An RNA of 177 nucleotides, treated with DMS and read out base by base. Reactivities are given for positions 27 through 126. Values are in units of 0.01, from 0 to 300, in steps of 10. The reactions ran in a buffer of 150 mM KOAc, 10 mM MgCl2 and 150 mM bicine (pH 8.5), at 24 C.

RNA sequence: GGGAACGACUCGAGUAGAGUCGAAAACAAGGCCGGCUGAUGAGGCAUACAAGGAAGAUAUUGUCGUGUUGAAUGUAGGGACCUGAGAGUUAGGGGCUGAUAGAAGCUUCGAAGCAAGUUUUAAGCCCAUCGAUCCCUGGUUCGCCAGGGAUCGAUGAAAAGAAACAACAACAACAAC
Reactivity to DMS in 0.01 (KOAc 150mM, MgCl2 10mM, bicine 150mM(pH8.5), 24C), signal-to-noise 1, nucleotides 027 to 126: c100a120a080g010g040c010c050g000g050c090u010g000a170u000g010a070g010g010c020a060u030a090c080a060a090g020g050a110a100g000a120u040a050u030u000g010u010c050g010u000g010u010u000g010a110a030u000g040u000a060g000g000g030a030c040c020u030g010a100g010a040g000u000u020a080g040g030g000g000c020u000g000a130u020a080g000a090a040g040c010u000u000c050g000a060a120g000c090a010a030g000u000u000u000u010a040a130g000c030c020